[RMDB]
RNA sequence: GGGAACGACUCGAGUAGAGUCGAAAAGAAUAAACAAAGUCCUAUAAACCUCAAUAAUCGCUCGUUAGGAGCGACACGCGAGGACUGUGGCGUGUCCAUCCAACGAAAUAAGCUCGAAAGACGAGCAAUAUCACUCCGAUUUCGAUCGGAGUGAUAUAAAAGAAACAACAACAACAAC
Reactivity to DMS in 0.01 (KOAc 150mM, MgCl2 10mM, bicine 150mM(pH8.5), 24C), signal-to-noise 3, nucleotides 027 to 126: g010a160a140u030a060a090a120c190a070a140a070g000u020c000c000u000a220u000a090a060a080c050c020u040c040a040a050u020a100a140u020c080g000c090u000c000g000u000u000a060g000g000a010g000c230g010a000c010a000c010g020c030g010a050g010g000a090c120u000g000u070g060g010c060g000u030g000u010c010c050a280u000c000c010a140a050c060g000a020a080a050u060a100a120g000c130u000c000g000a120a090a070g000a110c020g000a050g000c000a050
Reactivity to 2A3 in 0.01 (KOAc 150mM, MgCl2 10mM, bicine 150mM(pH8.5), 24C), signal-to-noise 3, nucleotides 027 to 126: g030a000a020u130a050a030a000c090a080a080a000g060u040c000c010u030a070u190a270a200a140c010c010u090c110a030a150u080a170a070u170c140g020c080u000c000g040u040u040a150g030g030a000g000c010g000a000c000a000c020g020c020g020a060g000g100a070c040u070g070u110g170g000c010g020u020g000u000c020c000a010u000c000c010a000a030c000g040a100a000a000u190a070a010g010c010u010c000g050a130a050a000g060a050c000g000a000g000c030a000